The record gives the reactivity of an RNA of 177 nucleotides to 2A3 and DMS.
[RMDB]
RNA sequence: GGGAACGACUCGAGUAGAGUCGAAAAACUUUGGCCGACGCUGCUAGGCGGGUGCGCACUGCUGUCUGGCCCGGCGCCGCGCUAGGGCGCACGUUUCGCUCUGCGGAGGGUUACCGGGCUGAAAUAAGAAGAGUCUAUCUUUCGAGAUAGACUCUUCAAAAGAAACAACAACAACAAC
Reactivity to 2A3 in 0.01 (KOAc 150mM, MgCl2 10mM, bicine 150mM(pH8.5), 24C), signal-to-noise 3, nucleotides 027 to 126: a010c070u130u090u110g070g000c020c010g040a050c030g020c050u040g000c040u060a060g030g010c030g030g020g020u130g020c050g020c010a040c060u110g000c010u030g030u090c070u050g030g000c030c010c010g020g000c030g020c010c020g030c010g000c080u140a020g000g000g030c010g030c030a080c090g080u060u210u210c000g010c000u000c000u000g010c010g050g090a190g050g100g060u030u060a080c000c000g020g010g000c000u010g040a030a030a030u180a070a030
Reactivity to DMS in 0.01 (KOAc 150mM, MgCl2 10mM, bicine 150mM(pH8.5), 24C), signal-to-noise 4, nucleotides 027 to 126: a080c060u000u000u010g020g010c030c010g010a070c090g010c040u010g010c090u010a090g010g010c050g000g000g020u000g020c050g020c040a060c070u000g020c060u000g020u000c060u000g010g010c010c010c020g010g010c300g010c000c010g030c020g000c040u010a030g000g000g010c000g020c130a030c210g000u000u000u000c010g010c010u000c010u000g010c020g000g010a110g000g010g020u000u010a080c010c000g020g000g020c010u000g000a030a050a100u020a110a130

Source: RMDB library M2PK90, as collected in RNAgym. Values cover nucleotides 27 to 126. Conditions: 150 mM KOAc, 10 mM MgCl2 and 150 mM bicine (pH 8.5), 24 C.